An RNA of 177 nucleotides, treated with 2A3 and DMS and read out base by base. For 2A3, 1,519 sequencing reads were counted. The reactions ran in a buffer of 150 mM KOAc, 10 mM MgCl2 and 150 mM bicine (pH 8.5), at 24 C.
[RMDB]
RNA sequence: GGGAACGACUCGAGUAGAGUCGAAAAGUUAGGAUGCAGAACCGAGUGGAAGAAUACUGCAGGUGGUGGUCUUGGCGACAUUAAGACUGGAGCUAUGUAUUUAGCAUUCGCAUCUGGCAACCAGAUGCCACCCGCUUACUUUCGAGUAAGCGGGUGGAAAAGAAACAACAACAACAAC
Reactivity to 2A3 in 0.01 (KOAc 150mM, MgCl2 10mM, bicine 150mM(pH8.5), 24C), signal-to-noise 2, nucleotides 027 to 126: g090u130u080a070g030g060a080u050g020c020a010g020a090a030c020c050g010a060g020u130g050g040a110a030g000a110a060u130a100c060u050g050c070a030g020g050u060g010g070u030g000g020u050c020u020u080g040g040c030g030a060c020a080u110u170a040a020g030a010c020u060g070g000a060g010c020u010a020u130g090u020a100u080u060u030a050g030c070a070u080u090c120g000c000a010u030c020u020g060g000c020a020a070c030c000a030g020a050u070g000
Reactivity to DMS in 0.01 (KOAc 150mM, MgCl2 10mM, bicine 150mM(pH8.5), 24C), signal-to-noise 3, nucleotides 027 to 126: g000u000u000a120g030g000a080u020g000c020a080g000a140a140c070c040g020a090g010u000g000g020a070a070g000a070a120u010a090c040u010g000c070a080g010g050u000g000g000u000g000g000u000c040u000u000g000g010c100g000a060c110a070u000u000a050a060g000a090c080u020g000g010a090g010c020u010a040u000g010u000a020u000u000u000a060g010c040a220u000u010c120g010c060a020u010c010u000g010g010c180a060a120c110c000a070g010a050u000g010